[RMDB]
RNA sequence: GGGAACGACUCGAGUAGAGUCGAAAACAGCGUACCUUCGGGUACGCUGAAAACUAAAACAAAAGCAAAGCCCGAUACGGCAAAACGAGCGAAAAGAAUAAGAAAGUAGGUGGUUCGCCACCUACAAGCCAAUUAAUAUGUUCGCAUAUUAAUUGGCAAAAGAAACAACAACAACAAC
Reactivity to DMS in 0.01 (KOAc 150mM, MgCl2 10mM, bicine 150mM(pH8.5), 24C), signal-to-noise 3, nucleotides 027 to 126: c000a020g000c000g000u000a020c000c010u010u010c170g040g000g000u000a010c010g010c000u030g000a000a020a070a180c060u000a090a080a080a170c080a060a080a130a120g000c050a080a180a190g000c000c000c080g000a090u010a050c260g000g000c010a040a030a080a070c180g010a140g020c050g000a080a040a040a090g010a100a040u000a090a110g020a130a110a130g010u000a010g010g030u000g000g020u010u010c150g010c000c000a000c000c000u000a000c000a020a100
Reactivity to 2A3 in 0.01 (KOAc 150mM, MgCl2 10mM, bicine 150mM(pH8.5), 24C), signal-to-noise 3, nucleotides 027 to 126: c010a000g000c010g000u000a000c000c000u010u070c190g120g000g010u020a000c000g000c000u000g000a000a000a000a010c010u020a050a000a020a030c040a070a110a020a020g060c030a040a070a000g020c000c040c010g120a140u150a300c050g020g000c010a070a080a040a030c040g020a030g040c040g050a030a110a050a060g060a030a170u230a200a040g090a130a070a010g000u000a010g000g010u010g030g030u020u050c160g070c060c000a000c000c000u000a000c010a000a000